[RMDB]
RNA sequence: GGGAACGACUCGAGUAGAGUCGAAAAGAUAUGGACUCCGUGUGGACAUGCUCUACGGUCGGAAACGACCGAUGAGCAACAGCCACCGGAGUCCUAAGUCAAACUACCGGCGUUCGCGCCGGUAGAAUCUUAUAUGUGUGUUCGCACACAUAUAAGAAAAAGAAACAACAACAACAAC
Reactivity to DMS in 0.01 (KOAc 150mM, MgCl2 10mM, bicine 150mM(pH8.5), 24C), signal-to-noise 3, nucleotides 027 to 126: g000a020u000a040u020g000g000a030c010u000c010c000g000u020g030u000g020g010a020c160a160u010g020c000u000c000u010a300c020g000g000u000c000g020g000a000a010a050c000g000a010c000c000g010a120u000g000a010g040c000a040a030c150a120g000c000c000a010c000c010g000g010a010g010u000c000c000u000a010a050g000u000c020a150a120a300c000u000a000c010c000g020g020c000g020u000u010c270g020c020g030c000c000g000g020u000a010g000a040a100
Reactivity to 2A3 in 0.01 (KOAc 150mM, MgCl2 10mM, bicine 150mM(pH8.5), 24C), signal-to-noise 2, nucleotides 027 to 126: g000a000u010a020u020g030g000a030c000u020c020c040g190u220g000u020g300g000a050c150a300u300g000c000u030c000u070a110c020g000g000u010c000g000g000a020a000a010c000g010a000c000c000g020a010u010g000a000g010c020a020a030c020a030g000c010c000a010c000c000g000g020a000g000u000c000c000u000a010a010g010u000c000a030a010a020c000u000a000c010c000g050g010c010g080u100u160c300g030c000g030c170c010g000g000u010a000g000a000a000
An RNA of 177 nucleotides, treated with DMS and 2A3 and read out base by base. Conditions: 150 mM KOAc, 10 mM MgCl2 and 150 mM bicine (pH 8.5), 24 C.